Record summary:
The record gives the reactivity of an RNA of 177 nucleotides to 2A3 and DMS. For DMS, 33,337 sequencing reads were counted. The data come from the RNA Mapping Database (RMDB), library OK1LIB.

RNA sequence: GGGAACGACUCGAGUAGAGUCGAAAAAUUUAUCGAUUGGAUGGAUGGUGCACAAGUGUGGCCAGAAAAUAGCACUUGGAAAUGGCAAAUCAAUCUGGCUAAAAUCGUUCAGUCUUAUUUAUAAGACUCAUUAAUAUGCAUUCGUGCAUAUUAAUGAAAAAGAAACAACAACAACAAC
Reactivity to 2A3 in 0.01 (KOAc 150mM, MgCl2 10mM, bicine 150mM(pH8.5), 24C), signal-to-noise 9, nucleotides 027 to 126: a000u140u150u080a120u070c040g030a030u020u090g060g040a040u020g060g030a040u020g020g070u080g020c030a020c010a070a030g020u030g010u030g090g000c020c000a010g060a010a100a020a020u160a030g010c010a010c040u020u020g050g040a040a120a110u090g060g000c020a050a060a020u100c020a000a050u010c010u000g030g000c000u030a070a010a010a120u130c060g030u070u050c010a020g000u000c000u020u050a130u110u220u050a200u070a040a000g000a000c000
Reactivity to DMS in 0.01 (KOAc 150mM, MgCl2 10mM, bicine 150mM(pH8.5), 24C), signal-to-noise 9, nucleotides 027 to 126: a080u020u020u020a050u010c030g000a090u020u020g010g000a060u010g000g010a040u010g010g010u010g000c060a070c040a030a030g020u000g020u030g010g000c040c030a040g000a040a060a080a100u030a140g010c010a030c030u000u000g010g020a070a090a120u030g000g020c050a050a080a080u020c110a080a070u010c010u000g000g000c040u010a090a050a070a050u030c100g010u010u010c070a040g010u000c000u000u000a030u010u010u020a060u010a020a000g000a010c000
Background: For 2A3 the reverse transcriptase was SuperScript II with manganese. DMS adducts were read by reverse transcription with MarathonRT. Conditions: 150 mM KOAc, 10 mM MgCl2 and 150 mM bicine (pH 8.5), 24 C.